RNA sequence: GGGAACGACUCGAGUAGAGUCGAAAAGAUAUGGAGACUUUAAUACAGAUACUAUAGACAUGCUUGCAUGUCGGAAACGACAUGUAAGCAACAGCUAUGAGUAUCUGUAUUAAAGUCUCCUAAGUCAUCCAUAAUCCUUGUUCGCAAGGAUUAUGGAAAAAGAAACAACAACAACAAC
Reactivity to DMS in 0.01 (KOAc 150mM, MgCl2 10mM, bicine 150mM(pH8.5), 24C), signal-to-noise 1, nucleotides 027 to 126: g030a050u000a300u000g000g000a010g030a040c000u000u010u000a020a000u000a000c000a020g000a010u000a010c000u010a020u000a010g040a030c120a200u000g020c000u000u030g010c030a000u000g020u000c020g000g000a110a090a230c000g000a010c000a000u000g000u000a010a020g000c000a020a040c300a100g020c000u000a000u000g030a020g000u000a000u010c000u000g000u000a000u000u000a000a010a010g000u000c000u000c000c000u000a010a030g000u000c050a240